Chemical mapping of a 177-nucleotide RNA with 2A3 and DMS. The DMS profile rests on 1,163 reads. The reactions ran in a buffer of 150 mM KOAc, 10 mM MgCl2 and 150 mM bicine (pH 8.5), at 24 C. 2A3 adducts were read by reverse transcription with SuperScript II with manganese. Values cover nucleotides 27 to 126.
RNA sequence: GGGAACGACUCGAGUAGAGUCGAAAAACUUAGCUUUUAAGUAGAAGCAAGAACAGGAAACUCAGGACUGCUAUCCUGAGCCACAUGCUUUGCCUCCUGCACCAUGAUUCCAAAAGCUGAUGAAAGAAGAGAUGAUUACCUUCGGGUAAUCAUCUCUAAAAGAAACAACAACAACAAC
Reactivity to 2A3 in 0.01 (KOAc 150mM, MgCl2 10mM, bicine 150mM(pH8.5), 24C), signal-to-noise 2, nucleotides 027 to 126: a010c020u070u050a010g010c000u090u000u030u040a140a030g050u220a110g120a040a000g030c040a020a030g030a060a040c040a070g080g120a020a010a000c010u000c000a020g020g000a020c100u220g020c040u270a060u030c000c000u000g010a000g000c000c000a080c000a030u140g020c030u090u030u220g070c000c000u050c000c000u020g040c030a040c030c010a090u150g020a110u070u000c030c030a050a090a050a040g010c030u070g050a150u120g050a140a060a040g210a050
Reactivity to DMS in 0.01 (KOAc 150mM, MgCl2 10mM, bicine 150mM(pH8.5), 24C), signal-to-noise 1, nucleotides 027 to 126: a050c060u000u000a050g000c060u000u010u000u000a020a230g000u030a050g000a150a010g040c000a010a000g000a130a070c090a110g030g000a150a220a220c000u000c030a020g010g000a010c030u120g080c170u080a300u000c000c030u000g010a030g000c030c030a100c250a050u010g000c000u000u000u000g000c000c020u000c000c000u000g000c050a100c030c040a040u000g000a090u040u000c030c000a040a010a060a010g020c030u000g030a080u030g000a030a000a020g000a030